The record gives the reactivity of an RNA of 177 nucleotides to 2A3 and DMS. For DMS the reverse transcriptase was MarathonRT. 2A3 adducts were read by reverse transcription with SuperScript II with manganese. For DMS, 3,470 sequencing reads were counted.
RNA sequence: GGGAACGACUCGAGUAGAGUCGAAAAAAUACCACCCCUUUUGGCGUUACUUUGCUAACUUGGAAUAACAGUACCUUCUAGUUUAGGCUAGAAUGGUUUUGGUGAUUAAAAUGGGUUACCACGGGUGCCAUACUCACUAGUUCGCUAGUGAGUAUGGAAAAGAAACAACAACAACAAC
Reactivity to 2A3 in 0.01 (KOAc 150mM, MgCl2 10mM, bicine 150mM(pH8.5), 24C), signal-to-noise 4, nucleotides 027 to 126: a000a000u220a030c000c010a010c000c000c000c000u040u100u020u060g050g000c010g040u050u030a060c050u140u190u150g020c030u030a030a050c020u020u070g080g060a100a060u100a120a000c030a020g020u020a010c000c000u010u000c000u010a010g010u030u040u080a180g100g000c000u010a000g020a020a030u110g020g000u030u020u040u060g020g000u070g010a090u080u100a020a080a050a150u120g060g010g000u020u040a030c010c010a040c060g060g010g020u050g040
Reactivity to DMS in 0.01 (KOAc 150mM, MgCl2 10mM, bicine 150mM(pH8.5), 24C), signal-to-noise 3, nucleotides 027 to 126: a060a060u020a120c090c030a210c040c030c000c040u010u000u000u000g020g010c070g010u000u000a070c140u010u010u000g020c070u010a020a030c050u000u000g000g010a150a070u000a110a050c060a060g000u000a030c010c000u000u000c000u000a000g010u010u000u020a130g010g000c010u000a000g000a010a000u020g020g010u010u000u010u000g000g010u000g000a080u000u000a020a040a080a110u010g020g010g000u000u000a070c040c040a070c170g000g000g010u010g000